[RMDB]
RNA sequence: GGGAACGACUCGAGUAGAGUCGAAAAAACGCUGGGUCCGUUGUAGGACGAAGUCAUUGAGAUAUACUGAAGCGCGCACGGUAUAUCAAUGAUGUGACCUGCGUCCGCAGAUAACGGACCUGUGCUGAAGCGCGCACGGCAACCGAAAGGUGCGAAAGAUUAUCUUUUGCUUCGGCAAAAGAUAAUCAAAAGAAACAACAACAACAAC
Reactivity to DMS in 0.01 (KOAc 150mM, MgCl2 10mM, bicine 150mM(pH8.5), 24C), signal-to-noise 1, nucleotides 027 to 156: a020a060c060g020c020u000g010g040g020u010c000c000g000u010u000g020u000a060g030g000a020c020g010a050a080g010u000c010a010u000u000g000a120g000a030u000a040u000a010c000u010g000a060a070g020c010g000c020g070c000a300c030g000g010u000a000u000a000u010c000a080a190u010g020a120u000g000u020g000a020c010c000u000g030c070g020u000c000c000g020c150a130g000a070u000a020a020c000g020g000a020c000c000u010g000u000g030c010u000g000a100a050g010c040g050c000g000c060a060c050g000g000c050a120a120c020c030g010a120a170a150g020g020u000g030c010g000a070a170a170
Reactivity to 2A3 in 0.01 (KOAc 150mM, MgCl2 10mM, bicine 150mM(pH8.5), 24C), signal-to-noise 3, nucleotides 027 to 156: a000a000c060g000c020u040g010g000g020u000c000c010g000u020u020g010u040a120g000g010a000c000g010a010a010g010u000c000a010u010u050g080a030g000a010u000a000u000a000c000u020g060a160a040g020c000g000c000g000c010a030c030g010g000u000a000u010a000u000c010a010a300u110g020a020u050g000u000g000a010c010c060u280g140c020g000u000c000c000g000c050a010g010a040u020a010a010c010g020g000a000c000c000u000g000u000g000c030u040g010a060a030g000c000g000c010g000c000a000c000g020g000c020a050a060c010c010g050a090a040a010g000g010u020g010c010g060a120a090a020
Conditions: 150 mM KOAc, 10 mM MgCl2 and 150 mM bicine (pH 8.5), 24 C.
Chemical mapping of a 207-nucleotide RNA with DMS and 2A3.
For 2A3, 4,628 sequencing reads were counted.
For DMS, 2,523 sequencing reads were counted.